Structure probing data (DMS and 2A3) for a 177-nucleotide construct. Reactivities are given for positions 27 through 126. The RNA was probed in 150 mM KOAc, 10 mM MgCl2 and 150 mM bicine (pH 8.5) at 24 C.
[RMDB]
RNA sequence: GGGAACGACUCGAGUAGAGUCGAAAAGCAUGUCAAUGGCAGCAUUAAGUCAUCAUCAUCGCUGCGAUCGAGCAGCAAAUCCUUUCAGGCAAAAAUGGAUCUGAUGUCCGAAAGGCUGUACGAUGUCCAGUGAGAAGGGUUUCGACCCUUCUCACUGAAAAGAAACAACAACAACAAC
Reactivity to DMS in 0.01 (KOAc 150mM, MgCl2 10mM, bicine 150mM(pH8.5), 24C), signal-to-noise 4, nucleotides 027 to 126: g020c090a040u000g010u000c050a110a080u000g010g010c020a030g020c020a070u010u000a130a090g000u000c010a010u010c020a080u000c110a110u000c190g020c020u000g000c020g010a090u000c170g010a190g010c010a010g010c020a060a120a040u020c020c020u000u000u010c040a060g010g000c110a010a040a050a040a060u010g010g000a060u000c100u000g010a160u010g000u000c020c020g000a040a060a060g020g000c180u010g000u000a050c080g000a060u000g010u010c050
Reactivity to 2A3 in 0.01 (KOAc 150mM, MgCl2 10mM, bicine 150mM(pH8.5), 24C), signal-to-noise 3, nucleotides 027 to 126: g050c040a020u080g020u110c030a010a190u120g030g000c020a010g000c040a060u060u120a080a010g010u020c010a010u000c000a010u020c000a010u160c130g040c010u010g000c020g050a140u190c060g050a040g010c010a010g000c000a030a000a040u020c000c000u020u040u040c060a090g090g000c050a030a050a050a050a120u140g070g000a020u010c040u070g040a040u020g030u000c010c000g040a020a000a000g040g000c010u050g010u030a070c050g020a010u060g060u060c030
Source information
2A3 is a SHAPE reagent: it acylates the 2'-hydroxyl of flexible nucleotides of all four kinds. DMS (dimethyl sulfate) methylates the pairing face of unpaired adenines and cytosines.